[RMDB]
RNA sequence: GGGAACGACUCGAGUAGAGUCGAAAAAAUGGGCUGCAUGAUUCCUGUAAUUAGUAGGAAGGGAUAAUUCUUUGACAUCACUUAAAGAUUAAUGAGUAUACUGGCAGUUCUUCCUUUUCUUCUUCUAAUUUCAUUUACUCUCUAUGCUACUAGCUGAGUCCUACGUACGAUUCGUCGUACGUAGGACAAAAGAAACAACAACAACAAC
Reactivity to 2A3 in 0.01 (KOAc 150mM, MgCl2 10mM, bicine 150mM(pH8.5), 24C), signal-to-noise 1, nucleotides 027 to 156: a000a000u080g000g000g020c060u020g030c120a080u050g020a060u080u030c000c000u030g030u060a140a110u180u020a080g070u040a050g030g020a010a020g000g010g030a010u120a140a020u120u080c050u080u030u040g020a020c020a050u080c040a050c110u050u110a170a030a030g030a040u070u080a020a050u040g020a000g030u010a020u040a300c090u100g120g030c030a020g000u020u010c020u000u030c050c000u070u020u000u000c070u030u020c010u090u000c010u020a130a210u000u110u060c080a030u050u130u060a090c020u050c010u010c020u130a080u260g100c000u000a030c000u060a030g110c000u000g050a040

The record gives the reactivity of an RNA of 207 nucleotides to 2A3. The reactions ran in a buffer of 150 mM KOAc, 10 mM MgCl2 and 150 mM bicine (pH 8.5), at 24 C. Reactivities are given for positions 27 through 156.